[RMDB]
Chemical mapping of a 177-nucleotide RNA with 2A3 and DMS.
It was measured as part of the RMDB library OK1LIB.
As a SHAPE reagent, 2A3 marks flexible, mostly unpaired nucleotides at the ribose 2'-OH.
DMS adducts were read by reverse transcription with MarathonRT.
2A3 adducts were read by reverse transcription with SuperScript II with manganese.
RNA sequence: GGGAACGACUCGAGUAGAGUCGAAAAGCUCUAGGAGACUAGAGCGAUACGUUAGAGAGCUCGUGGCAUGACUAACGGAUAGCCAGGCACGAGGUUGCCAGAGGACAUAGCUAUAGCUAUGUCCAAAGAGCUAUCUUACGUUCGCGUAAGAUAGCUCAAAAGAAACAACAACAACAAC
Reactivity to 2A3 in 0.01 (KOAc 150mM, MgCl2 10mM, bicine 150mM(pH8.5), 24C), signal-to-noise 2, nucleotides 027 to 126: g000c000u000c000u000a020g020g020a120g020a030c010u000a000g000a000g000c010g000a030u020a040c000g070u070u070a060g040a010g020a000g060c000u000c030g060u100g040g000c060a080u080g000a070c000u010a100a000c060g110g070a100u040a060g060c020c050a010g040g000c010a020c060g080a080g040g110u120u020g000c000c000a020g020a040g060g000a000c000a000u000a000g000c000u050a020u040a300g000c000u000a020u010g000u010c000c020a010a000a000
Reactivity to DMS in 0.01 (KOAc 150mM, MgCl2 10mM, bicine 150mM(pH8.5), 24C), signal-to-noise 2, nucleotides 027 to 126: g020c000u000c000u000a030g000g000a240g000a180c020u020a000g000a020g020c000g000a050u010a040c060g000u000u000a030g000a200g000a150g030c030u000c010g050u000g030g000c100a070u010g040a170c000u000a010a060c150g010g000a090u010a030g000c040c060a150g000g000c000a030c010g000a080g010g000u000u000g000c050c030a120g000a220g000g000a010c000a010u000a000g010c000u000a240u070a170g000c010u010a000u000g020u000c000c000a000a030a140